[RMDB]
RNA sequence: GGGAACGACUCGAGUAGAGUCGAAAACCACCGAAGUUCGCUUCGGUGGAAAAGAUACCGGUCUCGGUAUCAAAGUGAGACCCACAGACCACAGGAAACUGUAAACCGAUCCGUUCGCGGAUCGGAACGUCAUAUGCCUGUUCGCAGGCAUAUGACGAAAAGAAACAACAACAACAAC
Reactivity to 2A3 in 0.01 (KOAc 150mM, MgCl2 10mM, bicine 150mM(pH8.5), 24C), signal-to-noise 2, nucleotides 027 to 126: c010c000a000c010c020g000a000a020g000u020u160c100g040c140u020u000c000g000g000u050g000g000a000a010a040a030g010a010u000a010c030c030g010g120u220c300u200c300g000g020u010a010u000c020a040a000a040g060u070g010a100g030a080c000c060c000a010c000a020g190a050c030c060a010c040a040g070g000a050a050a080c030u070g070u210a060a020a070c010c000g000a000u010c020c000g000u030u050c300g000c000g100g020a010u000c010g020g000a000a000
Reactivity to DMS in 0.01 (KOAc 150mM, MgCl2 10mM, bicine 150mM(pH8.5), 24C), signal-to-noise 1, nucleotides 027 to 126: c000c010a000c000c000g000a000a010g010u000u000c270g030c000u000u010c000g000g010u000g000g000a000a000a080a130g000a000u000a040c010c020g000g000u000c280u030c070g020g030u000a000u000c020a010a110a110g020u000g030a090g030a170c040c000c000a180c150a080g000a080c110c180a050c010a030g070g000a190a060a100c100u000g010u000a100a130a180c040c000g000a030u010c000c000g030u000u040c180g050c000g020g000a040u000c000g000g000a010a080
Conditions: 150 mM KOAc, 10 mM MgCl2 and 150 mM bicine (pH 8.5), 24 C. The record gives the reactivity of an RNA of 177 nucleotides to 2A3 and DMS. The DMS profile rests on 627 reads. For 2A3 the reverse transcriptase was SuperScript II with manganese. For DMS the reverse transcriptase was MarathonRT. Source: RMDB library M2PK50, as collected in RNAgym.